[RMDB]
RNA sequence: GGGAACGACUCGAGUAGAGUCGAAAAUUGGGAUGUUUGUAAACAGUGAUCGGCAACUUAUAUUUGAUAUCUACCUAGUACACAUUUACAACAAGGAAAUGGAUGACUUUGAUGAAGGUUGCAUUAAAGUAUUAGAAGAAACAGCAGAAAGACAUGCCUUAUACUGUGGAUUCGUCCACAGUAUAAGAAAAGAAACAACAACAACAAC
Reactivity to DMS in 0.01 (KOAc 150mM, MgCl2 10mM, bicine 150mM(pH8.5), 24C), signal-to-noise 4, nucleotides 027 to 156: u000u000g020g040g020a140u010g010u000u000u010g010u000a040a040a040c070a090g030u010g000a110u000c130g030g010c010a060a050c070u000u000a070u000a140u010u000u000g010a120u000a060u000c020u000a050c020c010u000a090g030u000a090c050a060c030a120u000u000u000a070c030a030a070c080a050a100g020g000a050a070a100u000g020g010a090u000g010a040c010u000u000u020g010a020u000g000a050a030g030g010u000u000g030c030a040u000u000a020a040a080g010u000a040u000u000a070g000a040a060g010a070a030a010c020a030g020c000a040g020a010a020a040g030a020c020a120u010g000c110
Reactivity to 2A3 in 0.01 (KOAc 150mM, MgCl2 10mM, bicine 150mM(pH8.5), 24C), signal-to-noise 7, nucleotides 027 to 156: u070u030g020g010g030a040u050g050u070u060u070g060u100a080a080a050c050a070g020u020g070a090u070c040g020g000c030a040a040c090u200u050a090u060a120u250u130u110g080a060u080a110u080c040u050a060c030c010u030a050g070u130a040c050a000c000a050u050u080u090a060c040a090a000c020a050a040g100g030a070a090a070u090g050g030a030u070g010a000c000u020u020u030g040a070u150g010a030a020g040g010u030u050g030c030a010u040u100a090a030a000g000u010a030u060u040a030g000a190a010g010a020a050a010c030a030g000c010a000g020a000a020a000g020a030c000a020u090g010c000

Structure probing data (DMS and 2A3) for a 207-nucleotide construct. For DMS, 10,722 sequencing reads were counted. The reactions ran in a buffer of 150 mM KOAc, 10 mM MgCl2 and 150 mM bicine (pH 8.5), at 24 C. The 2A3 profile rests on 6,123 reads.